[RMDB]
RNA sequence: GGGAACGACUCGAGUAGAGUCGAAAAGCAUUUCUCGUCAAUCUAUAUCGCACUGUGCAAGCCAGCAGUCGCCUUCCCGUCGUCGACCCGCGCCGUUCCAGCUUCCACUCUUUCGCUCACACGCACGGAAUUAUACAGCGUUCGCGCUGUAUAAUUCAAAAGAAACAACAACAACAAC
Reactivity to 2A3 in 0.01 (KOAc 150mM, MgCl2 10mM, bicine 150mM(pH8.5), 24C), signal-to-noise 9, nucleotides 027 to 126: g060c050a080u020u060u000c030u010c020g090u060c050a040a110u030c050u110a110u040a050u200c050g020c020a040c050u050g030u060g050c030a050a040g040c010c020a020g000c020a020g040u050c020g020c020c000u040u040c010c000c000g040u030c020g020u020c020g040a070c000c000c010g020c010g010c020c010g020u040u020c010c000a010g010c010u060u010c010c000a030c010u030c000u020u080u060c030g000c020u020c010a050c010a010c040g040c010a030c060g050
Reactivity to DMS in 0.01 (KOAc 150mM, MgCl2 10mM, bicine 150mM(pH8.5), 24C), signal-to-noise 7, nucleotides 027 to 126: g020c100a070u020u010u010c000u000c030g000u030c100a060a080u010c080u000a100u030a090u010c070g010c050a050c040u000g010u030g010c060a080a090g010c050c030a080g010c100a070g010u010c060g010c050c040u000u000c020c010c010g010u010c050g020u000c040g010a080c050c010c040g010c060g030c020c020g000u000u000c020c020a070g010c040u000u000c050c010a060c060u010c030u000u000u010c040g010c030u000c020a050c070a070c100g010c080a060c150g000
Annotation
The data come from the RNA Mapping Database (RMDB), libraries RFM100 and RFMREP. The record gives the reactivity of an RNA of 177 nucleotides to 2A3 and DMS. The reactions ran in a buffer of 150 mM KOAc, 10 mM MgCl2 and 150 mM bicine (pH 8.5), at 24 C. 2A3 adducts were read by reverse transcription with SuperScript II with manganese.